[RMDB]
RNA sequence: GGGAACGACUCGAGUAGAGUCGAAAAUGAAACUUUGGCAGGAUAAUCAGCAGUCUGUGGCCGAGGUGAGUCUGGUGAUGCUGACUUGAGUAUCAGGACGGCUUUGAUUUACUGACAAGAAAAUUAGUCAAUGAUGAAUGUUCGCAUUCAUCAUUGAAAAAGAAACAACAACAACAAC
Reactivity to DMS in 0.01 (KOAc 150mM, MgCl2 10mM, bicine 150mM(pH8.5), 24C), signal-to-noise 7, nucleotides 027 to 126: u010g010a120a120a120c090u010u000u000g000g000c010a040g010g000a130u010a040a030u000c020a040g000c040a030g010u000c010u010g020u000g010g010c130c020g000a080g010g010u020g000a040g010u000c040u000g010g010u010g010a090u010g010c010u000g000a060c060u000u010g000a090g020u000a050u000c030a170g010g000a030c030g000g010c020u000u010u000g010a030u000u000u000a230c020u000g000a020c030a020a040g000a080a060a080a120u010u010a110g010
Reactivity to 2A3 in 0.01 (KOAc 150mM, MgCl2 10mM, bicine 150mM(pH8.5), 24C), signal-to-noise 4, nucleotides 027 to 126: u080g010a030a010a010c020u080u040u030g010g000c010a000g010g110a060u050a140a030u040c020a010g030c000a000g040u000c010u080g180u110g100g020c030c030g060a060g020g080u120g040a020g020u020c030u070g020g050u090g060a070u070g030c020u010g030a120c000u060u080g060a040g060u060a060u140c020a010g000g020a000c000g000g010c000u090u080u080g010a010u000u010u060a040c010u000g020a000c020a020a010g060a060a100a010a040u080u060a040g050